Conditions: 150 mM KOAc, 10 mM MgCl2 and 150 mM bicine (pH 8.5), 24 C. The record gives the reactivity of an RNA of 207 nucleotides to 2A3 and DMS. For 2A3, 905 sequencing reads were counted. DMS adducts were read by reverse transcription with MarathonRT. Source: RMDB library M2RFPK, as collected in RNAgym. High 2A3 reactivity points to a flexible backbone, as in loops and unpaired stretches.
RNA sequence: GGGAACGACUCGAGUAGAGUCGAAAAGAAACGCGAGGCCGCUGACCGACGGGAUAUUGUGGGGCUUACCACAGGGGACGCGGCGUUAUCACUUGCCUUUUAAGCCGACCGUCUGGGCUGCAUACAAACCACCCAACUAUCUUCGGAUAGUUGGGAAGAAGGUGCAAUAGUUCGCUAUUGCACCUUCAAAAGAAACAACAACAACAAC
Reactivity to 2A3 in 0.01 (KOAc 150mM, MgCl2 10mM, bicine 150mM(pH8.5), 24C), signal-to-noise 1, nucleotides 027 to 156: g000a000a030a000c050g030c030g000a070g130g000c040c010g000c080u040g090a060c000c060g020a030c040g000g050g040a050u140a130u230u110g030u030g000g000g020g060c080u070u100a010c010c010a000c010a040g000g000g010g050a000c030g010c020g040g000c010g000u020u020a060u030c030a000c050u030u090g020c010c010u080u040u010u170a040a020g020c020c030g000a040c000c000g020u000c000u040g020g040g000c000u030g000c050a050u050a090c020a020a060a040c020c050a030c000c000c000a000a000c000u030a000u000c080u110u080c090g030g000a000u000a000g020u000u000g000g000g000a000a000
Reactivity to DMS in 0.01 (KOAc 150mM, MgCl2 10mM, bicine 150mM(pH8.5), 24C), signal-to-noise 1, nucleotides 027 to 156: g010a130a120a030c020g040c040g000a010g030g060c010c040g020c010u000g000a170c010c010g000a080c110g040g040g000a120u010a090u020u010g010u000g000g030g030g000c140u000u030a150c050c060a020c000a070g060g040g000g000a180c140g010c020g030g000c040g060u000u000a110u000c020a110c090u020u000g050c010c020u050u020u020u000a020a130g030c050c000g030a070c040c010g010u000c070u000g020g010g030c060u000g000c040a060u040a090c150a080a110a110c050c020a230c000c010c000a000a040c000u000a000u000c000u010u010c300g030g000a010u000a040g000u000u000g000g000g020a020a030